The data come from the RNA Mapping Database (RMDB), library OK1LIB. The record gives the reactivity of an RNA of 177 nucleotides to 2A3.
[RMDB]
RNA sequence: GGGAACGACUCGAGUAGAGUCGAAAAUCCUUUGAGCACUUCUGUACGCAGCCCAACUUCCCUGUGGAAUCUCAAAGGCAUCGGGAAACACAAUCAUCUCAUAUUUCGUCCCCUCCUUAAGGUGCUCCGGGCAUCCGAUCUUCGGAUCGGAUGCCCGAAAAGAAACAACAACAACAAC
Reactivity to 2A3 in 0.01 (KOAc 150mM, MgCl2 10mM, bicine 150mM(pH8.5), 24C), signal-to-noise 1, nucleotides 027 to 126: u000c000c010u060u000u070g080a060g000c020a000c090u080u030c050u020g050u110a000c090g020c080a030g020c000c000c000a080a030c030u080u060c000c000c000u100g000u020g000g060a110a070u030c060u060c090a100a070a000g100g000c030a030u030c060g010g000g000a050a130a000c090a000c060a080a020u080c000a090u000c070u010c040a090u130a130u190u150u020c070g030u200c000c000c000c000u040c000c080u060u100a080a000g000g000u000g050c030u000c040